The data come from the RNA Mapping Database (RMDB), library OK2TST. An RNA of 177 nucleotides, treated with DMS and 2A3 and read out base by base. The DMS profile rests on 1,223 reads. For 2A3 the reverse transcriptase was SuperScript II with manganese. For 2A3, 701 sequencing reads were counted.

[RMDB]
RNA sequence: GGGAACGACUCGAGUAGAGUCGAAAACCUCCUUAUAUAAAUAUGCCAAGGGGUGGAAUUUUUAUACCUUUGAGAGAGGAUUUUGACUUAGAUUUGGGAAGAUUACAUGAAGAUGAAGUGUUCCUAACAUAUUCUGCAGUUUCGACUGCAGAAUAUGAAAAGAAACAACAACAACAAC
Reactivity to DMS in 0.01 (KOAc 150mM, MgCl2 10mM, bicine 150mM(pH8.5), 24C), signal-to-noise 2, nucleotides 027 to 126: c020c000u000c020c020u000u010a120u010a030u010a060a070a120u000a040u010g010c090c050a060a150g000g010g020g060u010g000g010a100a020u020u010u000u000u000a010u010a110c270c050u000u000u010g010a030g010a130g000a050g000g000a050u000u000u000u010g010a030c020u000u000a100g010a060u010u000u000g000g010g020a090a170g000a130u000u000a060c010a040u010g010a120a110g010a080u000g000a060a090g010u000g000u000u000c000c010u000a080a240
Reactivity to 2A3 in 0.01 (KOAc 150mM, MgCl2 10mM, bicine 150mM(pH8.5), 24C), signal-to-noise 1, nucleotides 027 to 126: c000c040u070c000c000u110u060a120u040a020u020a100a130a000u060a020u230g030c040c030a060a060g000g020g040g210u060g010g110a080a030u030u010u000u130u190a090u150a100c010c000u060u160u210g020a100g010a020g010a000g010g000a020u020u040u040u070g000a000c000u040u070a100g020a170u040u020u010g020g000g010a150a050g060a120u140u150a020c020a110u070g120a100a020g070a100u210g030a020a090g020u010g010u100u000c030c000u000a010a030